RNA sequence: GGGAACGACUCGAGUAGAGUCGAAAAUGCUCGACGGAGCGACAAAGGGUAUGACGGAAUAAACUGCUGUCGCGGCAGUUAACGUGCAAUGCUCAUUGGCAGGACUUACCAAGUCUGGGGGCCGAUGCAUGAUCGCACGGUUCGCCGUGCGAUCAUGAAAAGAAACAACAACAACAAC
Reactivity to 2A3 in 0.01 (KOAc 150mM, MgCl2 10mM, bicine 150mM(pH8.5), 24C), signal-to-noise 2, nucleotides 027 to 126: u000g000c000u060c000g230a250c230g060g040a030g050c020g000a000c090a020a080a000g070g000g000u030a050u060g030a040c010g080g100a090a090u140a030a120a000c010u030g060c030u050g230u300c130g030c070g110g000c000a000g000u030u020a020a040c000g030u070g090c070a010a110u070g040c000u010c060a020u070u020g090g000c050a030g000g000a000c000u020u090a150c000c100a000a000g030u050c030u070g000g000g000g000g050c000c000g000a000u050g000
Reactivity to DMS in 0.01 (KOAc 150mM, MgCl2 10mM, bicine 150mM(pH8.5), 24C), signal-to-noise 1, nucleotides 027 to 126: u090g040c020u000c060g000a170c140g120g000a010g020c000g000a050c150a100a160a110g000g000g040u000a030u000g000a010c090g000g020a090a020u030a000a000a080c010u000g000c160u000g000u020c280g030c070g000g000c000a020g000u000u000a100a060c060g110u000g020c030a160a020u000g010c090u010c060a100u010u020g000g050c000a160g000g000a030c030u000u000a160c030c150a050a040g030u000c000u010g000g000g000g000g030c000c000g000a020u070g000